[RMDB]
RNA sequence: GGGAACGACUCGAGUAGAGUCGAAAAGCUUACUAUAAAUGCACUAGCUGCUUGUGAUAGUGUAAUUAUUCCUGUUACUCCUCAAUAUCUUUCAGCUAAAGGCUUGGAGCUACUUCUUAGGAAUAUUAUAAGAGUUAAAAAGAGAAUAAAUCCUAGAUAGUAUGAUACGAUUCGUCGUAUCAUACUAAAAAGAAACAACAACAACAAC
Reactivity to DMS in 0.01 (KOAc 150mM, MgCl2 10mM, bicine 150mM(pH8.5), 24C), signal-to-noise 2, nucleotides 027 to 156: g020c040u000u010a080c040u010a130u000a060a070a180u010g000c020a100c050u000a040g020c040u010g020c110u000u000g000u020g010a130u000a030g020u000g000u030a020a110u000u010a070u010u010c020c000u000g000u010u000a050c010u000c010c020u000c090a090a100u010a120u000c000u000u000u020c050a220g000c100u000a090a080a120g010g040c100u010u000g010g030a050g010c040u000a020c030u010u010c090u000u010a110g010g010a100a060u000a020u000u010a090u020a050a160g010a170g000u000u030a030a040a110a110a080g010a170g010a150a130u010a020a080a110u000c010c000u010a080g000a300
Reactivity to 2A3 in 0.01 (KOAc 150mM, MgCl2 10mM, bicine 150mM(pH8.5), 24C), signal-to-noise 3, nucleotides 027 to 156: g040c020u100u090a070c070u150a120u190a190a180a050u120g010c010a010c040u020a010g020c050u040g000c060u100u150g100u070g070a080u050a010g010u020g020u070a070a060u100u090a030u050u060c000c000u000g050u030u030a050c020u030c040c030u030c080a150a110u070a120u130c070u030u110u040c050a020g000c010u080a160a100a040g070g000c020u030u060g010g000a000g010c020u000a020c020u050u110c010u010u060a020g000g030a040a080u030a070u270u100a030u110a100a050g020a020g030u080u090a060a100a020a090a000g070a010g040a000a090u200a080a080a050u060c000c000u020a020g040a090

Structure probing data (DMS and 2A3) for a 207-nucleotide construct. For DMS, 2,201 sequencing reads were counted. Values cover nucleotides 27 to 156. The 2A3 profile rests on 1,252 reads. The RNA was probed in 150 mM KOAc, 10 mM MgCl2 and 150 mM bicine (pH 8.5) at 24 C. Reactivities are rounded to 0.1 and cut off at 0 and 3.